RNA sequence: GGGAACGACUCGAGUAGAGUCGAAAAAGAACAGUGCUGCUCUCCAACCUCUGGGGCUUCCAGUGCCCCACGGCCUGCUGCUCCCCCAAGGCUGGACAGGCCGUGGGCAGAGCUGAGUGGGGCCGGCGAUUAAGCAUCACUUCGGUGAUGCUUAAUCAAAAGAAACAACAACAACAAC
Reactivity to DMS in 0.01 (KOAc 150mM, MgCl2 10mM, bicine 150mM(pH8.5), 24C), signal-to-noise 3, nucleotides 027 to 126: a070g000a120a070c090a060g010u000g010c060u010g000c010u000c030u000c030c050a090a100c050c030u010c070u000g020g000g000g020c070u000u000c070c070a090g000u000g000c070c000c000c020a030c010g010g000c010c010u000g010c020u010g000c010u000c020c150c010c030c030a130a160g000g010c010u010g010g020a170c100a070g000g000c000c000g030u010g010g000g030c110a040g000a090g010c030u010g000a070g020u000g010g010g000g010c120c020g000g010c140
Reactivity to 2A3 in 0.01 (KOAc 150mM, MgCl2 10mM, bicine 150mM(pH8.5), 24C), signal-to-noise 1, nucleotides 027 to 126: a040g070a110a030c060a060g050u030g100c020u020g010c000u030c030u020c060c020a040a060c040c020u040c080u050g000g000g090g070c000u230u110c060c040a100g070u040g170c030c000c000c000a000c000g000g000c020c000u020g000c000u020g020c010u090c040c060c020c000c020a010a040g040g000c020u060g060g050a060c010a000g000g050c000c000g010u050g010g000g000c020a010g020a000g000c010u060g020a050g080u090g020g050g040g000c010c020g080g040c050
An RNA of 177 nucleotides, treated with DMS and 2A3 and read out base by base. The DMS profile rests on 3,912 reads. Reactivities are given for positions 27 through 126. Conditions: 150 mM KOAc, 10 mM MgCl2 and 150 mM bicine (pH 8.5), 24 C. For DMS the reverse transcriptase was MarathonRT. The data come from the RNA Mapping Database (RMDB), library OK2TRN.